[RMDB]
RNA sequence: GGGAACGACUCGAGUAGAGUCGAAAAGUGCAUUUGAUAUAAUAAAUACAGAAGUUAAGAGAGGAAAGCAAAUGACAGAAGAACAGCUGCUAUUUAAGCAAGAAACAAUGUCAAUGGUUGACUUUAACGAGUUCUUACUUAACGCUGUUGAAUGUGGAAACUCAAGACCAUUCGUGGUCUUGAGUUUAAAAGAAACAACAACAACAAC
Reactivity to 2A3 in 0.01 (KOAc 150mM, MgCl2 10mM, bicine 150mM(pH8.5), 24C), signal-to-noise 2, nucleotides 027 to 156: g010u050g000c000a000u020u100u070g020a060u110a030u060a200a030u090a040a090a030u210a000c020a010g040a130a010g150u050u060a020a010g040a000g010a010g110g000a000a040a000g000c070a080a060a110u140g000a040c010a040g110a140a010g020a020a030c000a030g010c020u040g030c020u020a110u090u110u020a040a000g000c020a020a070g000a000a040a000c050a040a030u080g000u040c000a030a020u060g140g010u070u090g040a040c030u080u100u080a080a000c020g010a020g060u040u030c020u040u000a040c010u030u020a020a020c010g000c070u000g010u010u000g000a060a070u130g020u020g040g000
Reactivity to DMS in 0.01 (KOAc 150mM, MgCl2 10mM, bicine 150mM(pH8.5), 24C), signal-to-noise 1, nucleotides 027 to 156: g000u000g030c030a060u000u030u000g000a160u030a090u010a120a160u040a040a090a110u000a260c030a120g010a090a130g020u000u000a080a040g000a180g040a110g040g000a050a050a120g020c080a050a090a120u000g000a130c030a080g020a060a070g010a070a030c080a090g000c050u000g030c040u010a090u010u010u000a020a000g020c000a020a020g010a040a030a010c000a130a080u020g030u010c030a030a160u000g020g040u000u010g000a070c000u010u000u010a140a090c080g010a190g020u000u000c020u060u000a020c020u010u000a020a080c170g060c000u030g040u010u000g030a080a070u000g000u000g000g010